The data come from the RNA Mapping Database (RMDB), library RFM100. Chemical mapping of a 177-nucleotide RNA with 2A3. The reactions ran in a buffer of 150 mM KOAc, 10 mM MgCl2 and 150 mM bicine (pH 8.5), at 24 C. 2A3 adducts were read by reverse transcription with SuperScript II with manganese.

RNA sequence: GGGAACGACUCGAGUAGAGUCGAAAAACGACCACUACGGCUUACGAGCCGUAGUGGUCGACGGUAGCUGGAUAAAACCGGGCCAUUGGCCAAACCCAGCCCAUCAACUGCAGCACCUGUCCCGCAAGCUAGUCUACGAGUUCGCUCGUAGACUAGCAAAAGAAACAACAACAACAAC
Reactivity to 2A3 in 0.01 (KOAc 150mM, MgCl2 10mM, bicine 150mM(pH8.5), 24C), signal-to-noise 1, nucleotides 027 to 126: a000c030g000a000c000c050a000c010u010a060c010g010g000c010u160u060a040c300g100a000g000c000c000g020u000a000g000u000g010g020u020c000g020a000c000g000g000u050a090g080c000u090g000g100a020u050a090a200a090a090c030c020g000g020g000c070c050a290u300u300g020g000c040c050a000a050a050c020c000c000a020g000c010c010c000a070u140c070a000a060c140u170g000c130a000g000c030a000c000c000u050g000u020c000c000c000g040c090a080a060